[RMDB]
RNA sequence: GGGAACGACUCGAGUAGAGUCGAAAACAUGACCUUGCAACGCCUAACCCGCUUCUUCACCGCGAUAAUUCAGCUCCACAUUCUCAAACUAAUACCCAACGGCAGAAAAAGCGGUAUUGGUAUGGGAAUGCUACCACCCAUUCGUGGGUGGUAGCAUAAAAGAAACAACAACAACAAC
Reactivity to 2A3 in 0.01 (KOAc 150mM, MgCl2 10mM, bicine 150mM(pH8.5), 24C), signal-to-noise 3, nucleotides 027 to 126: c030a070u090g080a080c000c000u050u120g000c020a040a010c050g040c010c000u060a040a070c010c000c020g020c030u030u030c040u040u020c040a020c030c040g090c030g080a040u110a130a150u160u080c030a020g040c020u070c010c010a090c000a040u030u010c020u000c000a000a070a000c000u000a020a000u020a010c020c030c020a060a070c080g190g000c090a080g060a120a100a070a020a000g010c030g020g000u000a020u010u000g000g000u000a070u010g000g000g000a010
Reactivity to DMS in 0.01 (KOAc 150mM, MgCl2 10mM, bicine 150mM(pH8.5), 24C), signal-to-noise 1, nucleotides 027 to 126: c180a120u030g030a020c020c050u010u000g000c140a000a160c000g070c010c020u000a170a110c000c070c000g000c170u000u030c000u000u000c000a110c000c060g080c190g000a030u030a090a060u010u030c160a120g030c010u000c100c010a120c040a010u030u000c000u010c000a050a080a100c000u020a000a000u000a000c000c000c030a100a120c170g010g000c090a080g000a010a170a150a250a040g000c120g030g000u020a010u000u000g000g000u030a040u070g010g000g030a000